[RMDB]
An RNA of 177 nucleotides, treated with 2A3 and DMS and read out base by base. For 2A3, 5,924 sequencing reads were counted. The DMS profile rests on 19,764 reads. Values cover nucleotides 27 to 126.
RNA sequence: GGGAACGACUCGAGUAGAGUCGAAAAGCUGUGUAUCGCAGGGCUCGAUCAGUGGGCGUUGGCUCAGGUCGAUUGCUCUAAUGGUUUGGUCUGUGACCUGGUUGCUCGCUGAGAGUAGAACCAUUGGCUAAAUAAUAUUUUUCGAAAUAUUAUUUAGAAAAGAAACAACAACAACAAC
Reactivity to 2A3 in 0.01 (KOAc 150mM, MgCl2 10mM, bicine 150mM(pH8.5), 24C), signal-to-noise 6, nucleotides 027 to 126: g020c010u000g010u010g010u060a040u060c020g000c050a000g000g030g010c010u010c030g030a070u020c020a010g080u060g000g010g000c030g040u090u130g080g000c010u020c040a010g030g000u000c000g040a070u030u150g020c010u000c010u030a050a070u060g000g020u020u030u040g020g000u020c040u050g130u090g020a060c000c010u030g090g010u070u100g000c000u000c000g020c120u120g050a030g000a010g050u050a050g030a010a020c010c000a040u030u090g060g020
Reactivity to DMS in 0.01 (KOAc 150mM, MgCl2 10mM, bicine 150mM(pH8.5), 24C), signal-to-noise 5, nucleotides 027 to 126: g010c010u000g000u000g010u010a020u010c020g000c240a030g000g000g020c010u000c050g000a120u010c030a050g010u020g010g000g000c010g030u020u040g010g010c020u020c040a050g010g010u000c000g000a080u020u010g010c040u000c050u020a050a050u010g000g000u010u010u010g000g010u000c040u010g010u030g010a090c020c010u010g020g010u020u020g010c010u000c010g000c170u030g020a110g000a070g010u020a050g000a070a040c010c010a040u010u010g000g010